[RMDB]
RNA sequence: GGGAACGACUCGAGUAGAGUCGAAAAAUGUGGCUAUCACGAUGUCGAAAGGCGCAGGACAACUUGUUGCGGUUCUGGCCGUCCUGCUGGCCGGGGCAGUUUACGUUCCGGUUUCGUUGGACCAGCCUCAUAGCGUUGCGUUCGCGCAACGCUAUGAAAAAGAAACAACAACAACAAC
Reactivity to DMS in 0.01 (KOAc 150mM, MgCl2 10mM, bicine 150mM(pH8.5), 24C), signal-to-noise 1, nucleotides 027 to 126: a050u000g010u010g030g010c030u010a090u010c040a030c080g010a100u040g000u000c020g040a150a190a080g020g010c050g030c010a000g000g010a010c040a040a070c110u000u000g030u000u020g010c300g020g000u000u000c010u000g000g030c020c170g000u000c000c000u000g020c010u020g000g000c000c000g020g000g000g060c010a190g000u020u000u010a070c180g030u000u000c020c000g020g000u000u010u000c130g010u010u000g000g000a050c030c090a150g000c050c020
Source: RMDB library OK2TST, as collected in RNAgym. The record gives the reactivity of an RNA of 177 nucleotides to DMS. For DMS, 1,199 sequencing reads were counted. DMS adducts were read by reverse transcription with MarathonRT. Conditions: 150 mM KOAc, 10 mM MgCl2 and 150 mM bicine (pH 8.5), 24 C.